[RMDB]
RNA sequence: GGGAACGACUCGAGUAGAGUCGAAAAGAUAUGGACCCAUCGAGCUAUGAAGUGGGUCACGUCGGAAACGACGUGAGCCCAUGGAGCUCUUGAUGGGUCCUAAGUCAAACGCGUGUUCGCACGCGAAGAUUAUGUUUUGCUUCGGCAAAACAUAAUCAAAAGAAACAACAACAACAAC
Reactivity to DMS in 0.01 (KOAc 150mM, MgCl2 10mM, bicine 150mM(pH8.5), 24C), signal-to-noise 4, nucleotides 027 to 126: g010a040u010a300u010g000g000a020c010c000c000a010u000c000g000a030g020c000u010a220u020g010a150a240g020u000g010g010g020u000c000a010c000g000u000c000g010g000a150a080a280c000g010a030c000g020u000g010a090g000c000c000c000a000u000g010g010a040g000c010u000c010u000u020g040a030u000g020g020g020u000c000c000u000a000a100g000u010c030a130a150a230c040g020c000g050u000g010u000u010c240g020c010a010c000g010c000g000a050a080
Reactivity to 2A3 in 0.01 (KOAc 150mM, MgCl2 10mM, bicine 150mM(pH8.5), 24C), signal-to-noise 3, nucleotides 027 to 126: g020a010u060a040u170g000g010a000c010c010c010a010u020c020g000a000g000c000u070a300u300g080a190a050g030u020g000g040g010u010c000a000c010g000u000c010g020g020a060a070a030c010g010a000c000g010u010g020a060g120c000c000c000a000u010g000g020a000g000c010u000c040u030u290g010a000u000g000g020g000u000c000c000u000a000a000g000u000c010a020a020a040c010g010c010g000u010g010u080u050c260g000c150a010c000g000c010g040a070a010
Source information:
An RNA of 177 nucleotides, treated with DMS and 2A3 and read out base by base. It was measured as part of the RMDB library TTRDES. Values cover nucleotides 27 to 126.